Structure probing data (2A3 and DMS) for a 177-nucleotide construct. The reactions ran in a buffer of 150 mM KOAc, 10 mM MgCl2 and 150 mM bicine (pH 8.5), at 24 C. Reactivities are rounded to 0.1 and cut off at 0 and 3. 2A3 adducts were read by reverse transcription with SuperScript II with manganese.

[RMDB]
RNA sequence: GGGAACGACUCGAGUAGAGUCGAAAAGAGGACGCCGUUGCCGAGGGUGGAGAAUUCCUGUGCGAUGUAGUGGAGCAUUGUUCGUCCUCACGUGUUGGCGAGCCGAAUAGUGCUCUCCCAGCGUGCACCUCCAUCCAGCAUUCGUGCUGGAUGGAGGAAAAGAAACAACAACAACAAC
Reactivity to 2A3 in 0.01 (KOAc 150mM, MgCl2 10mM, bicine 150mM(pH8.5), 24C), signal-to-noise 2, nucleotides 027 to 126: g060a020g040g000a000c030g010c060c010g100u100u090g070c030c010g040a040g050g080g010u090g030g050a070g010a030a070u070u050c030c010u040g020u030g020c040g040a040u050g010u100a050g040u090g120g010a030g000c010a030u030u010g000u030u020c010g020u050c060c030u070c000a010c030g210u300g120u110u300g070g020c070g000a010g000c040c000g010a030a020u030a040g020u030g000c000u000c000u010c020c010c000a030g000c030g030u050g000c010a040
Reactivity to DMS in 0.01 (KOAc 150mM, MgCl2 10mM, bicine 150mM(pH8.5), 24C), signal-to-noise 3, nucleotides 027 to 126: g020a100g010g010a090c050g030c070c040g010u000u010g020c050c030g000a110g020g010g030u000g000g010a090g000a120a120u000u000c060c030u000g040u000g000c020g000a030u010g020u010a080g020u010g020g010a040g020c050a020u000u000g010u000u000c020g010u000c100c010u010c010a030c030g020u000g030u000u020g020g000c100g000a050g010c300c000g010a060a040u000a090g030u000g010c010u010c010u000c130c040c040a050g010c040g040u010g010c110a130